[RMDB]
RNA sequence: GGGAACGACUCGAGUAGAGUCGAAAAAGUAUAGGCGGUCGUAGCUGUCGUAGCCCCCGAAGUGGGUCUGGAUUAUUUCAUUCGCCAGGGUCAGCGGGGAGGUCCGGGACAAUAAGAACGACAGCCCGUCCUCGACCCUCAGCCGCAGCGACGCGGCAGCUUUAUUCUGUUUCGACAGAAUAAAGCUAAAAGAAACAACAACAACAAC
Reactivity to DMS in 0.01 (KOAc 150mM, MgCl2 10mM, bicine 150mM(pH8.5), 24C), signal-to-noise 2, nucleotides 027 to 156: a130g010u000a120u000a030g010g030c040g040g020u010c020g040u020a050g030c070u000g070u000c000g050u000a210g000c050c000c000c000c050g010a120a120g060u000g000g020g010u000c040u010g030g020a200u000u000a130u010u010u010c140a270u020u000c130g000c020c020a030g010g020g010u000c020a100g000c000g000g000g020g030a080g010g000u000c010c040g000g000g000a070c050a070a120u010a090a120g010a110a020c020g010a040c010a060g020c010c010c020g000u000c020c020u000c040g020a130c030c010c030u010c010a120g010c020c000g020c030a190g020c120g000a160c110g010c020g030g120c030
Reactivity to 2A3 in 0.01 (KOAc 150mM, MgCl2 10mM, bicine 150mM(pH8.5), 24C), signal-to-noise 3, nucleotides 027 to 156: a000g100u080a090u110a150g040g000c030g030g040u100c080g070u100a020g030c000u000g000u000c000g050u030a140g030c020c000c000c000c020g040a130a060g140u110g030g030g240u000c000u020g020g030a060u040u100a130u160u300u110c120a100u100u120c060g010c020c030a020g050g070g290u000c010a020g050c020g020g000g000g030a110g100g010u070c100c070g040g060g010a000c020a020a160u120a180a060g090a110a000c000g000a000c000a000g000c030c000c000g050u120c000c030u040c030g070a120c000c000c000u060c020a020g000c030c000g000c010a050g040c040g100a060c080g000c010g020g000c000